[RMDB]
RNA sequence: GGGAACGACUCGAGUAGAGUCGAAAAGAUAUGGACUUUUACCGUUCUCUAGCGUGUCGCCUACCAUUUAAUUCGGAAACGAAUUAAUGGUAGGAACUACGAUCGGGACGGUAAAAGUCCUAAGUCACUAUGACAGAAGGUUCGCCUUCUGUCAUAGAAAAGAAACAACAACAACAAC
Reactivity to DMS in 0.01 (KOAc 150mM, MgCl2 10mM, bicine 150mM(pH8.5), 24C), signal-to-noise 3, nucleotides 027 to 126: g030a040u020a300u010g010g000a000c000u010u000u000u000a000c000c000g000u010u010c010u020c080u000a100g020c020g030u010g010u000c300g020c010c000u000a000c000c000a030u010u000u010a000a010u000u000c000g020g000a120a170a220c010g010a030a000u010u000a000a000u000g010g020u010a010g000g000a000a000c030u020a040c000g010a090u000c300g000g000g000a020c000g000g000u000a000a000a000a000g010u010c000c000u000a000a070g010u000c040a270
Notes:
Chemical mapping of a 177-nucleotide RNA with DMS. The RNA was probed in 150 mM KOAc, 10 mM MgCl2 and 150 mM bicine (pH 8.5) at 24 C. Source: RMDB library TTRINS, as collected in RNAgym. Reactivities are rounded to 0.1 and cut off at 0 and 3.